[RMDB]
RNA sequence: GGGAACGACUCGAGUAGAGUCGAAAAAGGGACAUCCGCUGCUCGGAGGAUGAGAAGCUGUGUGACCCCAACACCAGGCCUGUAGGGGAGAAGAACUGCACGGGCCCGCCCUGUGACCGGCAGUGGACUGUCUUACCUGGUUCGCCAGGUAAGACAGAAAAGAAACAACAACAACAAC
Reactivity to 2A3 in 0.01 (KOAc 150mM, MgCl2 10mM, bicine 150mM(pH8.5), 24C), signal-to-noise 1, nucleotides 027 to 126: a000g060g020g020a010c020a050u000c000c020g040c010u000g000c070u120c160g060g000a040g050g020a020u110g050a090g060a180a040g020c140u040g010u010g020u050g230a150c000c000c030c000a010a010c020a000c000c050a020g020g080c010c000u020g010u030a140g000g100g000g060a070g100a120a030g000a140a130c100u120g030c130a010c020g000g000g000c000c000c000g010c010c000c010u080g070u100g050a110c020c020g000g010c000a000g000u000g020g010a020
Reactivity to DMS in 0.01 (KOAc 150mM, MgCl2 10mM, bicine 150mM(pH8.5), 24C), signal-to-noise 2, nucleotides 027 to 126: a100g020g000g000a130c070a120u010c010c040g000c010u000g010c010u000c060g010g000a140g010g000a090u000g000a080g020a080a120g040c060u010g020u020g020u000g010a150c050c000c010c020a110a080c060a040c060c040a060g000g010c040c040u000g020u000a140g000g010g000g010a100g000a100a050g000a100a130c040u000g010c090a050c010g010g010g000c020c040c050g010c060c040c000u000g000u000g000a160c030c040g000g000c000a000g010u000g020g000a090
This 177-nucleotide RNA was probed chemically with 2A3 and DMS.
Reactivities are given for positions 27 through 126.
The RNA was probed in 150 mM KOAc, 10 mM MgCl2 and 150 mM bicine (pH 8.5) at 24 C.
In probing experiments dimethyl sulfate is read out at A N1 and C N3, which are open when not base-paired.